[RMDB]
RNA sequence: GGGAACGACUCGAGUAGAGUCGAAAAGACGUGGAGGUUUCGCGCCCUCCUUUGCGCGUAAGUACGUCGAAAUUCGGUGCUCUGGAUCGCACCGUCUGAUCCAUUAGAUAUCCGCUUUGUGCCGCGGUUGGGCAUUUACACUUACCCGAAAGGGGAAGCUAUGCGUAGCAUUCGUGCUACGCAUAGCAAAAGAAACAACAACAACAAC
Reactivity to 2A3 in 0.01 (KOAc 150mM, MgCl2 10mM, bicine 150mM(pH8.5), 24C), signal-to-noise 4, nucleotides 027 to 156: g020a010c020g010u040g020g100a090g040g080u020u060u100c020g010c010g010c000c010c010u170c000c040u040u070u070g040c010g000c000g010u020a060a030g050u040a040c010g000u020c040g030a090a020a050u060u050c000g000g010u010g000c010u020c040u160g120g060a110u080c020g000c030a030c030c010g010u000c000u010g020a030u030c010c020a050u100u120a080g060a070u100a060u120c020c020g010c040u060u130u160g070u060g030c040c020g020c050g060g030u090u080g050g010g020c020a030u050u070u110a060c080a010c030u050u120a060c000c030c000g030a030a030a010g000g000g000g010a010a030
Reactivity to DMS in 0.01 (KOAc 150mM, MgCl2 10mM, bicine 150mM(pH8.5), 24C), signal-to-noise 2, nucleotides 027 to 156: g010a030c040g030u000g010g000a080g000g020u010u010u030c110g030c060g030c150c030c070u010c060c000u000u010u000g020c000g000c060g000u010a030a050g030u010a060c040g000u000c020g010a050a080a120u000u000c000g010g050u010g010c020u000c090u020g020g020a120u000c120g000c010a170c040c050g000u000c030u000g000a090u000c000c020a190u000u000a080g010a160u010a130u000c030c030g000c050u000u010u010g020u010g020c020c090g020c030g020g010u020u000g030g000g010c040a070u010u000u000a090c090a100c080u000u000a140c000c010c000g010a090a080a160g010g000g000g000a080a100
An RNA of 207 nucleotides, treated with 2A3 and DMS and read out base by base. For 2A3 the reverse transcriptase was SuperScript II with manganese. Source: RMDB library OK3TST, as collected in RNAgym. The DMS profile rests on 6,062 reads. For 2A3, 3,838 sequencing reads were counted.